[RMDB]
Conditions: 150 mM KOAc, 10 mM MgCl2 and 150 mM bicine (pH 8.5), 24 C. An RNA of 177 nucleotides, treated with DMS and 2A3 and read out base by base. For 2A3 the reverse transcriptase was SuperScript II with manganese.
RNA sequence: GGGAACGACUCGAGUAGAGUCGAAAAGGCUUAUCCCGGGGGGUAGCGCUCCGUGCCCUUCCAUAGCACUGGGGUCCCGGGCCCCCUCCCAGGAAUGGGAAUGGGGGGAGAUCGACCGGGUCCCGCACCAGUCAUAAAAGUUCGCUUUUAUGACUGGAAAAGAAACAACAACAACAAC
Reactivity to DMS in 0.01 (KOAc 150mM, MgCl2 10mM, bicine 150mM(pH8.5), 24C), signal-to-noise 1, nucleotides 027 to 126: g000g020c050u000u000a120u010c030c000c000g020g000g020g020g020g040u000a030g000c090g020c040u000c070c020g000u000g010c020c020c040u000u030c020c030a130u000a070g010c030a100c160u010g010g000g020g010u000c000c000c010g040g010g000c000c000c000c010c010u010c000c000c030a010g000g060a140a170u000g000g000g000a140a040u000g020g000g000g010g010g000a050g000a050u000c130g000a150c000c000g000g000g000u000c010c000c000g000c180a090
Reactivity to 2A3 in 0.01 (KOAc 150mM, MgCl2 10mM, bicine 150mM(pH8.5), 24C), signal-to-noise 1, nucleotides 027 to 126: g030g020c030u070u060a020u080c020c000c000g030g040g010g030g030g010u060a090g280c040g000c070u080c060c030g010u000g020c000c000c030u060u030c010c010a070u120a020g020c090a030c170u070g010g010g000g010u060c030c010c000g000g030g090c000c000c000c010c000u000c010c000c000a020g000g110a110a080u020g000g000g060a060a050u180g080g010g000g000g030g000a030g010a040u070c070g080a100c000c010g000g010g000u000c000c000c010g000c000a010